[RMDB]
RNA sequence: GGGAACGACUCGAGUAGAGUCGAAAAGAUAUGGAAGACUGCAUUAUAGCGAGGAUCUAAGCUCGGAAACGAGCUUAGGGAGCUAUAUGUGUCUUCCUAAGUCAAAACGGGGCCUUCGGGCCCCGAACUGAUCAGUUAGGUUCGCCUAACUGAUCAGAAAAGAAACAACAACAACAAC
Reactivity to DMS in 0.01 (KOAc 150mM, MgCl2 10mM, bicine 150mM(pH8.5), 24C), signal-to-noise 1, nucleotides 027 to 126: g000a020u000a300u020g010g000a060a020g020a020c000u010g030c120a040u010u000a010u000a000g000c000g010a070g030g010a000u010c000u000a000a010g010c010u000c000g010g000a080a040a160c000g020a020g010c000u000u000a010g000g000g000a000g040c000u000a010u010a000u000g010u000g000u000c000u000u000c000c000u010a010a050g010u000c010a090a090a120a210c040g000g020g000g000c000c010u000u000c300g030g030g040c000c000c000c000g010a010a070
Reactivity to 2A3 in 0.01 (KOAc 150mM, MgCl2 10mM, bicine 150mM(pH8.5), 24C), signal-to-noise 1, nucleotides 027 to 126: g010a020u030a050u100g000g000a020a010g010a010c060u240g050c150a080u230u180a110u300a090g040c050g120a300g010g010a000u000c010u010a010a000g040c000u020c000g010g000a010a050a020c000g010a000g020c000u000u010a000g020g020g000a000g020c000u020a000u010a030u300g080u000g000u090c000u000u010c000c010u000a010a010g010u010c030a000a000a170a140c020g010g000g000g020c000c000u100u180c300g150g030g000c000c000c000c000g010a040a000

Source information:
An RNA of 177 nucleotides, treated with DMS and 2A3 and read out base by base. For 2A3 the reverse transcriptase was SuperScript II with manganese. DMS (dimethyl sulfate) methylates the pairing face of unpaired adenines and cytosines. For 2A3, 2,313 sequencing reads were counted.